[RMDB]
RNA sequence: GGGAACGACUCGAGUAGAGUCGAAAAACGGCACAUGCUAACAACAUUAACAGAUUUAAUGUUGCAAUCACUCGUGCCCAAAAAGGUAUUCUUUGUGUUAUGACAUCUCAGGCACUCUUUGAGUCCUAAAUCGUUAGGUUCGCCUAACGAAAAAGAAACAACAACAACAAC
Reactivity to 2A3 in 0.01 (KOAc 150mM, MgCl2 10mM, bicine 150mM(pH8.5), 24C), signal-to-noise 9, nucleotides 027 to 129: a000c020g000g000c010a010c000a020u050g020c030u080a130a050c020a010a000c000a000u010u010a020a020c040a160g260a300u060u060u040a000a000u000g000u000u000g020c050a040a070u080c010a010c080u090c070g010u010g000c000c000c000a040a100a030a010a010g110g020u130a110u080u040c040u030u070u050g060u010g040u050u080a190u160g020a030c040a180u050c060u010c070a000g020g000c060a020c020u040c030u050u090u170g030a010g020u000c000c000u040a050a080a050
Reactivity to DMS in 0.01 (KOAc 150mM, MgCl2 10mM, bicine 150mM(pH8.5), 24C), signal-to-noise 9, nucleotides 027 to 129: a110c230g000g000c010a000c000a080u000g010c050u040a150a230c000a010a000c000a000u000u000a010a050c290a160g050a110u050u020u010a000a000u000g000u000u000g010c040a060a070u030c070a080c160u000c140g010u010g040c000c010c150a000a090a050a110a000g020g010u040a110u040u010c030u030u010u020g000u010g020u030u030a050u050g010a080c130a110u000c130u000c070a070g000g040c100a050c040u010c030u010u000u000g020a010g030u000c040c000u000a030a050a060